[RMDB]
RNA sequence: GGGAACGACUCGAGUAGAGUCGAAAAGAUAUGGAUCCCUAAGGAGCACAGUGUUUGUCGGAAACGAUGAUACUGUGAACUACUCCGAAGGGAUCCUAAGUCAAACACUUUGGUUCGCCAAAGUGAACCAAGUUAAAGACUUCGGUCUUUAACUUGGAAAAGAAACAACAACAACAAC
Reactivity to DMS in 0.01 (KOAc 150mM, MgCl2 10mM, bicine 150mM(pH8.5), 24C), signal-to-noise 4, nucleotides 027 to 126: g000a030u000a300u010g010g010a000u010c000c000c000u010a040a300g010g000a010g000c000a000c000a000g000u010g010u000u010u010g070u010c010g000g000a140a090a200c010g010a010u000g010a010u000a000c000u000g000u000g000a050a040c080u010a300c000u000c020c030g000a300a020g010g000g010a000u000c010c000u000a020a090g020u000c040a130a120a140c000a010c000u000u000u000g010g010u020u010c240g030c000c000a000a010a010g000u000g000a070a190
Reactivity to 2A3 in 0.01 (KOAc 150mM, MgCl2 10mM, bicine 150mM(pH8.5), 24C), signal-to-noise 2, nucleotides 027 to 126: g040a010u050a070u180g010g000a010u000c000c000c000u010a030a030g020g000a000g020c020a000c000a000g020u010g060u180u300u300g030u060c010g030g000a080a080a070c010g000a010u010g010a000u020a020c000u000g000u000g000a010a000c010u110a040c000u000c010c000g000a020a010g000g000g000a000u000c000c000u000a000a000g010u000c020a010a110a040c020a000c020u010u000u000g060g020u060u110c300g110c050c010a000a000a000g000u010g010a020a010

An RNA of 177 nucleotides, treated with DMS and 2A3 and read out base by base. 2A3 adducts were read by reverse transcription with SuperScript II with manganese. The 2A3 profile rests on 7,466 reads.